RNA sequence: GGGAACGACUCGAGUAGAGUCGAAAAGCGGGUAACUUCGGUUACCCGCAAAGACGCGUCUCGUCGCGUCGCCGUCGCGUCGGGGCGCGUCGCGUCGCGAGAAAAGGACGAAGUUCGCUUCGUCCAAGCAGUAUUUUUGGUUCGCCAAAAAUACUGCAAAAGAAACAACAACAACAAC
Reactivity to 2A3 in 0.01 (KOAc 150mM, MgCl2 10mM, bicine 150mM(pH8.5), 24C), signal-to-noise 2, nucleotides 027 to 126: g000c010g020g000g040u020a010a020c010u020u120c200g050g010u000u000a000c000c010c000g000c000a010a000a000g010a000c000g000c000g000u000c000u000c000g000u010c000g030c000g000u030c040g040c050c100g110u070c020g000c000g030u010c000g000g050g000g070c000g030c000g010u020c000g020c000g010u040c050g030c080g030a100g080a050a130a010a080g000g000a000c000g000a010a000g010u010u130c200g040c070u010u000c000g000u000c000c010a000a000
Reactivity to DMS in 0.01 (KOAc 150mM, MgCl2 10mM, bicine 150mM(pH8.5), 24C), signal-to-noise 1, nucleotides 027 to 126: g010c000g000g010g000u000a000a000c010u000u000c220g030g000u000u000a000c000c000c000g030c000a000a030a060g010a020c020g010c000g010u000c000u000c000g030u000c000g010c000g010u000c120g020c110c130g010u000c030g010c000g000u000c040g000g010g000g000c000g010c020g010u000c000g000c110g030u000c090g010c050g000a140g000a040a080a110a120g010g010a010c010g000a010a010g020u010u010c220g000c010u000u000c000g010u000c000c000a010a070
The record gives the reactivity of an RNA of 177 nucleotides to 2A3 and DMS.
The reactions ran in a buffer of 150 mM KOAc, 10 mM MgCl2 and 150 mM bicine (pH 8.5), at 24 C.
Source: RMDB library M2PK50, as collected in RNAgym.
As a SHAPE reagent, 2A3 marks flexible, mostly unpaired nucleotides at the ribose 2'-OH.